[RMDB]
RNA sequence: GGGAACGACUCGAGUAGAGUCGAAAACGAUUAGCAUUCGUGCUAAUCGAAUCAGGUAGUACCUAUCUCUAUUACCUGUUGUGGCCAACGUCCGGACAGAGAAUCGAGUCCUGUUCGCAGGACUCAACUUAAAAUGGCAGUUCGCUGCCAUUUUAAGAAAAGAAACAACAACAACAAC
Reactivity to 2A3 in 0.01 (KOAc 150mM, MgCl2 10mM, bicine 150mM(pH8.5), 24C), signal-to-noise 5, nucleotides 027 to 126: c000g010a000u000u010a000g010c010a010u020u030c170g110u040g000c000u000a000a010u000c000g000a000a070u100c010a010g010g010u010a010g010u020a040c020c040u110a150u110c080u000c020u030a030u050u040a030c010c010u020g050u080u120g170u140g060g010c050c050a080a040c080g080u020c020c020g040g040a030c030a090g080a010g040a100a080u190c110g000a000g010u000c010c000u000g020u030u060c290g000c050a010g000g000a000c000u000c000a000a010
Reactivity to DMS in 0.01 (KOAc 150mM, MgCl2 10mM, bicine 150mM(pH8.5), 24C), signal-to-noise 5, nucleotides 027 to 126: c010g010a010u000u000a010g000c010a030u000u010c210g030u000g020c000u000a000a000u000c000g010a060a060u010c030a010g000g000u000a020g010u000a090c170c090u010a120u010c100u010c070u010a030u010u000a020c010c010u000g000u000u000g000u000g010g000c030c040a060a080c140g010u010c020c040g000g000a090c140a090g000a090g010a080a100u010c160g000a010g010u000c000c000u010g010u000u010c180g010c010a010g000g010a010c000u000c010a020a050